[RMDB]
RNA sequence: GGGAACGACUCGAGUAGAGUCGAAAACAUCUCAACCUGAGGAACCUGUCCAAUGGUUUCGAUCGUGCGGAAGAUCUGACCAGGAGUCCAGGUGGCACGAGAAAGCUCUGCGGUAAGGCCUUCUGGGCAAUGCCUAGGUGUUCGCACCUAGGCAUUGAAAAGAAACAACAACAACAAC
Reactivity to 2A3 in 0.01 (KOAc 150mM, MgCl2 10mM, bicine 150mM(pH8.5), 24C), signal-to-noise 4, nucleotides 027 to 126: c040a130u030c010u010c040a030a090c000c020u030g020a030g030g030a040a120c010c020u050g130u070c040c000a050a040u080g020g000u000u030u030c020g020a050u010c020g010u060g030c060g110g050a090a050g040a200u010c030u050g040a040c010c020a100g000g140a070g030u050c090c030a010g050g050u080g100g000c020a020c070g040a030g050a070a060a020g060c030u040c030u250g050c040g060g000u070a040a040g030g000c010c010u060u040c040u040g000g000g000
Reactivity to DMS in 0.01 (KOAc 150mM, MgCl2 10mM, bicine 150mM(pH8.5), 24C), signal-to-noise 6, nucleotides 027 to 126: c200a110u000c030u000c020a140a120c030c030u000g000a240g010g010a040a060c020c040u000g010u000c080c120a080a190u000g010g010u010u000u000c120g010a130u000c080g000u010g010c050g010g000a100a130g010a050u000c040u000g000a070c030c030a150g000g010a110g020u010c060c030a030g020g020u010g010g020c020a030c080g000a090g010a100a090a080g010c030u000c030u000g000c210g000g010u010a090a050g010g000c170c010u000u000c030u000g000g000g000